Conditions: 150 mM KOAc, 10 mM MgCl2 and 150 mM bicine (pH 8.5), 24 C. An RNA of 177 nucleotides, treated with DMS and 2A3 and read out base by base. In probing experiments dimethyl sulfate is read out at A N1 and C N3, which are open when not base-paired. Values cover nucleotides 27 to 126.
RNA sequence: GGGAACGACUCGAGUAGAGUCGAAAAGAAUGCCUACCACGAUCAUCUCCGGCACGGUCAUAUUGCCGUUGGUAGUGCUGAGCUGGUAGAUCAUGCCCGUCACCGAACGGAAAUGUCCGUUGCCAUCCGUUCCCACUCCAUUCGUGGAGUGGGAACGAAAAGAAACAACAACAACAAC
Reactivity to DMS in 0.01 (KOAc 150mM, MgCl2 10mM, bicine 150mM(pH8.5), 24C), signal-to-noise 1, nucleotides 027 to 126: g010a060a080u000g000c120c000u000a080c080c040a100c130g000a170u000c100a090u010c080u020c110c130g020g020c030a020c030g000g000u010c060a010u000a060u010u000g020c010c010g000u000u000g000g020u020a020g020u010g010c060u020g010a020g010c030u000g000g020u000a070g000a130u020c020a050u020g000c000c010c020g030u020c090a050c040c060g010a030a020c020g010g000a040a060a040u000g000u000c000c010g000u020u000g010c030c010a140u000c090
Reactivity to 2A3 in 0.01 (KOAc 150mM, MgCl2 10mM, bicine 150mM(pH8.5), 24C), signal-to-noise 2, nucleotides 027 to 126: g060a020a030u110g060c000c000u020a030c030c020a060c090g020a070u070c030a020u040c060u020c140c070g000g000c030a010c020g000g000u020c020a030u080a080u080u300g040c010c010g030u010u000g060g030u040a160g050u010g110c030u020g000a040g000c070u040g000g110u120a040g000a160u090c000a060u230g050c000c000c050g020u050c000a010c030c040g110a000a010c010g000g000a070a050a050u060g030u010c010c000g090u110u050g030c000c020a010u030c000